[RMDB]
RNA sequence: GGGAACGACUCGAGUAGAGUCGAAAAGCAGCGCGUCUUUGUAGAGCGGACGAAAGCUCUGGCUUCGGGCCGCCUCUCAAGGGUAGCAGACGAUCGAGUCAGGGUCGACUCGAGAGGUCGGCCAUACGCGGGUUUCUAGCUUCGGCUGGGAACCCGCAAAAGAAACAACAACAACAAC
Reactivity to DMS in 0.01 (KOAc 150mM, MgCl2 10mM, bicine 150mM(pH8.5), 24C), signal-to-noise 1, nucleotides 027 to 126: g000c060a090g000c110g010c000g020u020c000u000u000u000g000u070a030g000a080g030c020g000g000a090c000g000a010a030a070g000c000u020c200u060g000g000c000u000u010c030g040g000g010c000c000g000c120c020u000c000u000c020a000a020g000g000g050u020a070g000c060a120g000a020c020g000a080u000c000g030a060g020u020c040a120g000g000g050u000c030g000a020c020u010c030g000a070g000a220g020g000u000c000g030g020c000c020a050u020a040c180
Reactivity to 2A3 in 0.01 (KOAc 150mM, MgCl2 10mM, bicine 150mM(pH8.5), 24C), signal-to-noise 4, nucleotides 027 to 126: g100c080a030g070c040g010c020g040u010c030u000u030u040g080u160a030g000a010g020c000g020g000a000c000g070a130a050a010g000c010u020c100u230g160g000c010u010u000c010g100g060g050c000c000g020c010c000u000c010u000c000a000a030g060g010g000u130a020g060c030a010g010a010c010g020a020u060c030g020a000g030u020c030a020g030g030g000u020c000g010a010c010u010c020g030a040g010a020g020g000u040c000g000g000c000c000a080u100a110c050